The record gives the reactivity of an RNA of 177 nucleotides to 2A3 and DMS. It was measured as part of the RMDB library OK1LIB. Values cover nucleotides 27 to 126. The reactions ran in a buffer of 150 mM KOAc, 10 mM MgCl2 and 150 mM bicine (pH 8.5), at 24 C.

RNA sequence: GGGAACGACUCGAGUAGAGUCGAAAACGGGGUGAGAAAGGCCCCGGCCUGGGCCUCCAGGCCCGGCCUCAGACGACGCCGCAGCGCCCGCACCUGAAGCGCGUUCAGCUUCAGUUGGGGGAGCUUCCAGUCUUACGAGUUUCGACUCGUAAGACUGAAAAGAAACAACAACAACAAC
Reactivity to 2A3 in 0.01 (KOAc 150mM, MgCl2 10mM, bicine 150mM(pH8.5), 24C), signal-to-noise 5, nucleotides 027 to 126: c000g010g020g010g020u040g050a240g080a130a090a040g110g000c010c010c000c000g000g000c000c000u020g000g000g040c030c070u110c110c110a070g010g000c000c000c010g000g000c010c010u020c020a090g050a130c050g010a020c010g040c030c020g040c050a010g010c000g020c000c000c030g130c010a020c000c000u010g000a000a010g000c030g030c040g090u200u270c160a050g000c000u010u000c000a010g010u000u010g110g020g000g000g000a010g000c000u040u010c030
Reactivity to DMS in 0.01 (KOAc 150mM, MgCl2 10mM, bicine 150mM(pH8.5), 24C), signal-to-noise 2, nucleotides 027 to 126: c020g000g000g000g000u030g020a120g010a160a090a070g010g020c010c000c090c110g000g000c010c000u000g060g040g040c170c300u070c110c260a070g000g000c020c000c300g000g020c010c020u000c100a120g010a170c180g010a050c050g000c000c010g000c160a020g040c000g000c020c000c010g000c000a000c060c000u000g000a000a000g000c000g020c300g030u050u060c230a110g030c000u000u000c020a000g000u000u030g030g000g000g000g000a060g030c010u000u020c090